An RNA of 177 nucleotides, treated with DMS and 2A3 and read out base by base.
RNA sequence: GGGAACGACUCGAGUAGAGUCGAAAAGAACCGCGAUUCGUCGCGGUUCGAGCGCCGUAGCGCGCAACGGCGUAACGGCAGCAAUAGCGCGCAGCUGCCGACGAUCGGGUGGUUUCGACCACCCGAACGUUAAAGAUGCAUUCGUGCAUCUUUAACGAAAAGAAACAACAACAACAAC
Reactivity to DMS in 0.01 (KOAc 150mM, MgCl2 10mM, bicine 150mM(pH8.5), 24C), signal-to-noise 9, nucleotides 027 to 126: g010a010a000c000c000g020c000g010a020u000u010c170g010u000c000g020c000g010g010u000u000c000g000a110g010c010g000c000c000g020u010a060g010c040g010c030g010c030a090a020c020g000g000c000g020u000a080a150c050g010g000c010a010g010c020a070a090u000a100g010c030g010c020g030c050a200g000c010u000g010c010c010g010a080c180g000a100u000c000g010g000g020u000g010g000u000u000u020c200g000a040c000c000a010c000c000c000g000a000a020
Reactivity to 2A3 in 0.01 (KOAc 150mM, MgCl2 10mM, bicine 150mM(pH8.5), 24C), signal-to-noise 7, nucleotides 027 to 126: g000a000a000c000c000g000c010g010a020u040u060c170g010u010c000g110c000g000g000u000u000c000g000a000g000c010g000c000c000g030u040a040g050c040g000c010g000c080a020a010c010g010g000c010g020u050a170a080c020g030g000c010a000g000c010a030a220u070a100g050c040g000c000g000c030a010g000c000u010g000c010c010g040a110c060g040a070u050c000g000g000g000u010g010g010u020u050u130c230g070a030c000c000a000c000c000c000g000a000a000
The DMS profile rests on 33,040 reads. Reactivities are rounded to 0.1 and cut off at 0 and 3. It was measured as part of the RMDB library M2PK50. The RNA was probed in 150 mM KOAc, 10 mM MgCl2 and 150 mM bicine (pH 8.5) at 24 C.